Structure probing data (DMS and 2A3) for a 177-nucleotide construct. The data come from the RNA Mapping Database (RMDB), library OK2TRN. The 2A3 profile rests on 2,609 reads.
[RMDB]
RNA sequence: GGGAACGACUCGAGUAGAGUCGAAAACAGUCAAGGUGAAGGCGGGCCAGACCAUCGCCGCAUUCUACCAGAGCACCGUCAUGAUCUUUGGCACGAUGGCUCGCUACAUACUAAGAGUUAGGGAAAACCUCAUAAUCCCAUUCGUGGGAUUAUGAGGAAAAGAAACAACAACAACAAC
Reactivity to DMS in 0.01 (KOAc 150mM, MgCl2 10mM, bicine 150mM(pH8.5), 24C), signal-to-noise 3, nucleotides 027 to 126: c070a100g020u000c060a050a210g020g010u000g010a160a150g020g010c020g010g000g000c010c010a100g000a170c090c120a050u000c080g020c060c060g020c100a020u010u010c040u010a110c040c010a100g000a040g020c080a060c020c010g010u010c100a080u000g000a080u000c050u000u000u000g010g000c040a070c120g000a140u000g000g010c010u020c010g000c020u000a060c080a120u010a070c060u000a040a300g000a100g020u000u020a110g020g000g000a030a020a080a170
Reactivity to 2A3 in 0.01 (KOAc 150mM, MgCl2 10mM, bicine 150mM(pH8.5), 24C), signal-to-noise 3, nucleotides 027 to 126: c040a020g140u090c060a080a040g000g020u010g060a100a050g050g000c000g000g000g030c030c000a030g030a070c070c010a100u110c080g020c040c020g000c000a000u090u020c020u090a120c070c000a030g030a020g080c080a050c080c020g110u090c030a110u130g080a120u050c050u040u110u120g010g020c070a010c140g090a090u050g010g010c000u010c010g000c010u000a030c020a080u130a040c020u040a080a020g030a000g110u080u100a050g080g000g000a010a090a040a100